[RMDB]
An RNA of 177 nucleotides, treated with 2A3 and DMS and read out base by base. DMS adducts were read by reverse transcription with MarathonRT. Values cover nucleotides 27 to 126. Source: RMDB libraries RFM100 and RFMREP, as collected in RNAgym. Conditions: 150 mM KOAc, 10 mM MgCl2 and 150 mM bicine (pH 8.5), 24 C.
RNA sequence: GGGAACGACUCGAGUAGAGUCGAAAAUGAUUAGUGUGAGAGCUAGGAACCGUAGGGGUGUUCUCAAAGGAAUCCUUUGCAGUGACGUCCUCGCAAGAGGACUAUAACAACAGAACUCGUAUUAGUACUAUGGGACAUCAUUCGUGAUGUCCCAUAGAAAAGAAACAACAACAACAAC
Reactivity to 2A3 in 0.01 (KOAc 150mM, MgCl2 10mM, bicine 150mM(pH8.5), 24C), signal-to-noise 4, nucleotides 027 to 126: u170g030a040u070u040a030g040u020g010u010g040a080g000a020g070c020u050a020g080g040a020a060c050c050g000u120a060g000g040g010g010u060g090u120u020c030u030c060a090a060a000g090g010a080a120u040c010c000u010u020u040g050c080a010g020u010g020a040c020g000u010c000c000u000c010g000c020a060a010g000a020g000g000a000c000u000a010u000a020a020c040a000a010c000a030g090a080a030c030u040c040g020u100a050u110u090a050g050u010a020
Reactivity to DMS in 0.01 (KOAc 150mM, MgCl2 10mM, bicine 150mM(pH8.5), 24C), signal-to-noise 4, nucleotides 027 to 126: u040g000a090u000u010a040g020u020g020u000g000a060g010a080g020c050u010a050g000g000a160a100c050c050g030u000a070g010g040g010g010u000g020u000u020c000u000c090a040a070a110g000g000a110a090u010c010c010u000u030u010g010c110a100g010u000g000a220c180g010u010c020c000u000c010g000c300a080a170g000a000g020g000a020c020u000a000u060a140a080c150a060a090c170a060g010a060a050c020u010c050g030u000a070u000u000a050g020u020a140